Source information
The record gives the reactivity of an RNA of 207 nucleotides to DMS and 2A3. DMS adducts were read by reverse transcription with MarathonRT. Values cover nucleotides 27 to 156. Conditions: 150 mM KOAc, 10 mM MgCl2 and 150 mM bicine (pH 8.5), 24 C. It was measured as part of the RMDB library OK3TST.
RNA sequence: GGGAACGACUCGAGUAGAGUCGAAAAUGAGAACAGGAUGGGGGAAGCUGCCCUUCUGAUUCAGUUACCUCCCACCAGGUGCCUCACACGACAUGUGGGGACUCUGGGAACUGUUGUACAACUCAAGAUGAAAUUUGGGUAGGGAAACAGCCAAACCAUCAUGUAGUUAAUUCGUUAACUACAUGAUAAAAGAAACAACAACAACAAC
Reactivity to DMS in 0.01 (KOAc 150mM, MgCl2 10mM, bicine 150mM(pH8.5), 24C), signal-to-noise 3, nucleotides 027 to 156: u000g000a170g000a050a110c050a060g000g000a040u000g000g000g040g040g000a090a110g010c060u000g010c040c010c010u010u000c010u000g010a160u010u000c030a140g020u010u000a100c030c040u000c000c000c010a160c020c010a030g000g010u000g010c020c000u010c020a010c030a160c070g050a140c040a300u000g010u000g000g000g020g000a040c010u020c020u000g010g010g000a050a110c050u010g020u000u020g020u000a040c050a050a110c030u000c040a020a100g020a180u000g000a050a110a170u020u000u000g000g000g020u000a050g010g020g000a150a060a010c030a070g010c010c040a040a050a100c120c090
Reactivity to 2A3 in 0.01 (KOAc 150mM, MgCl2 10mM, bicine 150mM(pH8.5), 24C), signal-to-noise 3, nucleotides 027 to 156: u190g020a060g020a100a000c010a020g060g030a070u220g040g020g040g020g040a040a060g070c110u140g040c010c020c000u050u020c050u020g270a300u020u030c010a010g040u040u090a120c000c080u030c030c000c000a040c010c000a000g040g020u160g220c000c000u040c000a000c000a010c050g300a050c080a120u150g000u000g000g000g000g010a010c030u050c000u060g000g000g010a040a040c020u010g000u000u020g020u070a060c050a040a010c050u010c040a040a010g030a100u230g220a120a130a130u080u060u040g000g000g020u020a040g030g030g010a060a100a080c010a020g060c020c020a070a060a020c050c000